[RMDB]
RNA sequence: GGGAACGACUCGAGUAGAGUCGAAAACUCCGGCCACGCACUCGCAACACGACUCGACGGAACACCAUUCGACCCAAAAUUCCACGACACGCUCAUGACAGCCAGCAAGAUCUGCUUCGACGGAAACGCACUGUUCAACUACUUCCUGCAACACGAACUGAGCAUGUAUGUUCGCAUACAUGCUCAGAAAAGAAACAACAACAACAAC
Reactivity to 2A3 in 0.01 (KOAc 150mM, MgCl2 10mM, bicine 150mM(pH8.5), 24C), signal-to-noise 3, nucleotides 027 to 156: c020u000c010c010g030g000c040c000a050c060g040c010a070c040u060c030g120c060a050a050c040a060c130g100a090c040u040c060g090a060c040g000g050a090a020c020a010c060c040a060u090u070c070g060a090c020c000c000a030a050a070a080u140u000c050c010a040c060g050a020c060a010c050g050c000u020c040a040u060g020a040c010a010g020c050c000a010g000c030a010a060g030a130u040c010u040g010c000u090u160c040g100a140c020g030g000a060a060a030c040g010c000a030c000u040g050u150u090c010a090a030c010u100a030c020u060u070c020c010u020g030c010a090a000c050a010c160g020a080a010
Reactivity to DMS in 0.01 (KOAc 150mM, MgCl2 10mM, bicine 150mM(pH8.5), 24C), signal-to-noise 1, nucleotides 027 to 156: c050u010c000c000g000g010c020c020a030c040g020c020a130c040u000c020g040c010a050a170c040a150c020g000a070c060u000c020g020a100c040g000g020a090a090c040a090c010c010a140u000u000c000g000a070c010c020c030a070a110a090a150u010u000c050c000a060c050g040a140c070a000c040g010c030u010c020a110u000g020a120c030a060g010c020c000a130g030c020a100a140g020a080u050c070u000g010c050u000u000c070g010a140c050g050g010a010a020a080c060g000c040a090c060u000g010u000u000c050a020a070c020u000a040c040u000u010c040c000u000g010c020a060a110c050a070c070g010a140a240